[RMDB]
RNA sequence: GGGAACGACUCGAGUAGAGUCGAAAACAUGGGGGAUAGUCACAGUCAAUCAAGACCCCAACCAGUGCAGAAUUGAUGGAUCCAGCAAAGACACUUCUGCGAAAAAGGAGGAUGAUCAGUGGAUGUGAGCACUAUGUCUCUUCGGAGACAUAGUGCUAAAAGAAACAACAACAACAAC
Reactivity to DMS in 0.01 (KOAc 150mM, MgCl2 10mM, bicine 150mM(pH8.5), 24C), signal-to-noise 2, nucleotides 027 to 126: c100a210u010g040g000g040g000g000a070u010a100g030u030c080a040c140a060g000u030c090a000a060u010c080a030a100g000a080c020c000c000c030a190a150c060c020a170g020u030g060c150a020g000a000a040u000u020g000a140u000g000g020a040u020c040c060a010g050c300a050a000a140g020a150c210a040c060u000u000c000u000g000c040g060a020a000a060a260a040g000g060a040g000g010a150u030g000a030u000c080a100g040u000g000g050a030u010g000u030g000
Reactivity to 2A3 in 0.01 (KOAc 150mM, MgCl2 10mM, bicine 150mM(pH8.5), 24C), signal-to-noise 2, nucleotides 027 to 126: c040a170u230g040g000g000g000g000a030u060a170g040u170c100a040c040a300g140u150c060a000a040u000c000a000a040g120a130c000c000c000c000a020a030c000c020a060g030u160g080c030a070g010a040a090u070u030g010a030u030g050g080a000u000c050c020a000g030c050a020a220a000g010a040c010a000c040u000u000c000u040g150c120g160a020a010a020a020a020g040g000a000g000g000a100u060g000a050u080c110a080g030u000g060g000a030u010g100u090g160

Source: RMDB library OK1LIB, as collected in RNAgym.
This 177-nucleotide RNA was probed chemically with DMS and 2A3.
For DMS, 1,440 sequencing reads were counted.
Values cover nucleotides 27 to 126.
DMS adducts were read by reverse transcription with MarathonRT.
The 2A3 profile rests on 919 reads.
The RNA was probed in 150 mM KOAc, 10 mM MgCl2 and 150 mM bicine (pH 8.5) at 24 C.